[RMDB]
RNA sequence: GGGAACGACUCGAGUAGAGUCGAAAAGAUAUGGAGCUCCGAUAAGCUGGUGUCGGAAACGACACCAGCUUUUGACGGAGCUCUCCUAAGUCUAAAACCAACAUCUUGCUUCGGCAAGAUGUUGGAACUUACAUAUCGGCUUCGGCCGAUAUGUAAGAAAAGAAACAACAACAACAAC
Reactivity to DMS in 0.01 (KOAc 150mM, MgCl2 10mM, bicine 150mM(pH8.5), 24C), signal-to-noise 1, nucleotides 027 to 126: g010a090u020a170u010g040g000a040g000c010u000c000c000g040a110u000a010a020g040c000u020g010g010u010g010u000c000g010g010a090a070a250c000g000a010c000a010c000c000a000g000c000u000u000u000u000g000a130c080g010g000a010g020c020u000c000u020c010c010u000a040a110g000u000c100u000a050a070a090a140c000c000a010a000c000a000u000c000u000u020g000c010u000u000c290g000g000c020a010a000g000a000u010g000u010u000g030g000a020a060